[RMDB]
RNA sequence: GGGAACGACUCGAGUAGAGUCGAAAAGAUAUGGACAUACAAGACAUGAUCUGCGUAGGAUAGGUUCGGAAACGAACCCUGAUCAACAGCUUGGUGUCCUAAGUCAAAGAUGGAGUUCGCUCCAUCAGCAUAAUCUAGUCUUCGGACUAGAUUAUGCAAAAGAAACAACAACAACAAC
Reactivity to 2A3 in 0.01 (KOAc 150mM, MgCl2 10mM, bicine 150mM(pH8.5), 24C), signal-to-noise 4, nucleotides 027 to 126: g010a000u030a010u070g020g000a000c000a020u300a300c010a140a000g040a030c150a300u300g000a020u010c020u050g090c200g300u300a170g170g230a170u120a160g010g000u000u000c000g000g020a020a010a010c000g000a000a000c000c000c000u020g010a020u020c080a250a100c040a120g010c000u000u000g000g020u000g010u000c000c000u000a020a000g010u000c020a180a090a050g010a010u000g000g010a000g040u110u150c220g190c110u020c000c000a000u000c010a000
Reactivity to DMS in 0.01 (KOAc 150mM, MgCl2 10mM, bicine 150mM(pH8.5), 24C), signal-to-noise 4, nucleotides 027 to 126: g010a030u000a160u000g000g010a000c000a000u020a110c000a000a000g010a070c040a300u020g020a010u000c000u000g000c240g010u020a170g020g030a200u000a110g000g000u000u000c000g010g000a040a020a070c000g000a020a000c010c000c020u000g000a030u000c010a070a070c240a120g000c010u000u000g000g020u000g000u000c000c000u010a020a120g000u000c020a130a110a210g000a010u000g000g000a030g030u010u020c300g010c010u000c000c000a000u000c010a070
The record gives the reactivity of an RNA of 177 nucleotides to 2A3 and DMS. Reactivities are rounded to 0.1 and cut off at 0 and 3. Reactivities are given for positions 27 through 126. The 2A3 profile rests on 10,479 reads.